An RNA of 177 nucleotides, treated with 2A3 and read out base by base. Conditions: 150 mM KOAc, 10 mM MgCl2 and 150 mM bicine (pH 8.5), 24 C. For 2A3, 578 sequencing reads were counted. The data come from the RNA Mapping Database (RMDB), library OK1LIB. Reactivities are rounded to 0.1 and cut off at 0 and 3.
[RMDB]
RNA sequence: GGGAACGACUCGAGUAGAGUCGAAAAAGCACGAUUAUAGCUCACUGCAGCCUUAACUUUCCAGGCUCAGGUGAUCCUCCCACCUCAGCCUCUCGAGUAGCUGGGACUAUAGGCGUUUGUCCCAAUAGCGACCAUGCGUUUUCGAACGCAUGGUCGCAAAAGAAACAACAACAACAAC
Reactivity to 2A3 in 0.01 (KOAc 150mM, MgCl2 10mM, bicine 150mM(pH8.5), 24C), signal-to-noise 1, nucleotides 027 to 126: a000g090c010a020c010g050a000u000u070a030u120a000g010c000u020c060a090c080u270g000c160a020g010c000c030u250u120a240a150c030u140u110u110c060c000a000g000g020c000u000c000a000g050g010u010g000a050u050c000c000u030c030c030c020a000c010c000u000c000a000g020c000c000u010c010u020c020g000a030g000u030a020g000c020u000g000g090g010a030c000u000a000u060a020g030g000c020g000u000u090u090g010u000c010c000c000a010a030u140a000

Reactivities are given for positions 27 through 126. 2A3 adducts were read by reverse transcription with SuperScript II with manganese.